[RMDB]
RNA sequence: GGGAACGACUCGAGUAGAGUCGAAAAGAUAUGGAUGAACUCCCCACCGAACUACAGCGCAGGGUCGGAAACGACCUCAGGCUGCGAGGUUCAUCCUAAGUCAAGCACCUACGUUCGCGUAGGUGAACAAUUAUUAGAGCUUCGGCUCUAAUAAUUGAAAAGAAACAACAACAACAAC
Reactivity to DMS in 0.01 (KOAc 150mM, MgCl2 10mM, bicine 150mM(pH8.5), 24C), signal-to-noise 3, nucleotides 027 to 126: g010a090u010a180u010g010g000a020u000g010a010a010c020u010c090c020c030c100a300c160c070g000a060a060c070u010a170c020a020g010c010g000c050a300g010g000g000u010c010g010g000a060a060a160c010g000a010c000c000u000c040a200g000g000c010u010g020c040g000a070g000g000u000u000c010a010u000c000c000u000a050a090g010u010c110a100a120g000c000a000c000c000u000a010c000g010u000u010c250g010c010g020u000a000g000g020u000g000a030a110
Reactivity to 2A3 in 0.01 (KOAc 150mM, MgCl2 10mM, bicine 150mM(pH8.5), 24C), signal-to-noise 1, nucleotides 027 to 126: g060a070u240a120u300g010g000a000u010g010a000a000c030u210c050c060c000c030a040c040c050g030a080a080c070u190a060c300a010g000c030g020c050a020g000g000g000u000c000g030g000a070a060a010c010g000a000c000c010u050c010a000g050g050c010u010g010c010g020a020g040g000u000u000c000a000u000c000c000u020a130a020g130u100c150a100a020g090c000a010c000c000u010a010c010g030u010u090c300g000c000g140u000a000g000g000u010g000a000a000

The record gives the reactivity of an RNA of 177 nucleotides to DMS and 2A3. The data come from the RNA Mapping Database (RMDB), library TTRDEL. For DMS, 9,589 sequencing reads were counted. 2A3 adducts were read by reverse transcription with SuperScript II with manganese. Conditions: 150 mM KOAc, 10 mM MgCl2 and 150 mM bicine (pH 8.5), 24 C.